[RMDB]
RNA sequence: GGGAACGACUCGAGUAGAGUCGAAAAAUUCAUACGGGACAAUCUCACCAACCGUGAAACGCUUCUGGAUUGCCUUAAUUCUUUCCUCUCCAAGAUCUGCAAUCUGCUUUUCAAUGUUAGGAAUCAUUUUUUAUCCUUUUGACUAAAUGCCAUUUGCGUAUGCGCAGUGUUUCGACACUGCGCAUACAAAAGAAACAACAACAACAAC
Reactivity to 2A3 in 0.01 (KOAc 150mM, MgCl2 10mM, bicine 150mM(pH8.5), 24C), signal-to-noise 1, nucleotides 027 to 156: a070u300u130c080a130u120a100c030g000g000g000a090c040a060a040u000c010u010c130a100c040c000a080a030c020c040g010u070g000a030a050a000c070g040c000u160u060c100u130g060g000a010u010u010g000c000c000u080u230a070a120u190u000c020u040u050u080c000c080u120c000u000c050c080a030a030g000a090u060c020u020g010c000a030a030u010c000u110g060c000u040u090u040u030c010a030a030u080g040u080u060a010g000g060a020a020u020c040a120u190u110u000u070u110u270a080u000c020c000u150u020u020u170g020a070c000u220a200a040a020u120g000c090c000a080u020u230u250g050c060
Chemical mapping of a 207-nucleotide RNA with 2A3.
The reactions ran in a buffer of 150 mM KOAc, 10 mM MgCl2 and 150 mM bicine (pH 8.5), at 24 C.
2A3 adducts were read by reverse transcription with SuperScript II with manganese.
Source: RMDB library OK3TST, as collected in RNAgym.
The 2A3 profile rests on 312 reads.
Reactivities are given for positions 27 through 156.